Chemical mapping of a 207-nucleotide RNA with 2A3.
For 2A3 the reverse transcriptase was SuperScript II with manganese.

[RMDB]
RNA sequence: GGGAACGACUCGAGUAGAGUCGAAAAUUGCACUAAUAGCAUUUUAAAAAUUGGAAUCACGCCUCUUAUCCAUCAUGGGGCUGGUUCCAUCUUGUUAAACAGUCUUUAUGAUCAUCCUAACAUUUAUAAGAUAUUAAUUUUGGCAAGAAGACCAAAAGUAGCAUGAUGAUUUCGAUCAUCAUGCUACAAAAGAAACAACAACAACAAC
Reactivity to 2A3 in 0.01 (KOAc 150mM, MgCl2 10mM, bicine 150mM(pH8.5), 24C), signal-to-noise 3, nucleotides 027 to 156: u040u030g000c010a000c060u170a050a160u090a210g000c090a120u000u000u150u300a070a200a040a050a070u120u060g010g020a000a000u000c000a000c110g000c020c010u000c010u110u180a190u240c120c030a070u080c110a140u210g000g030g000g000c000u000g000g030u000u000c000c000a000u000c000u000u000g000u020u020a040a090a000c040a080g020u000c010u000u110u110a170u220g120a120u050c030a040u070c040c030u080a060a020c020a010u070u280u290a220u110a070a020g010a000u070a070u110u150a090a140u010u040u030u030g010g000c030a050a060g060a060a030g030a140c030c000a010a070a000a040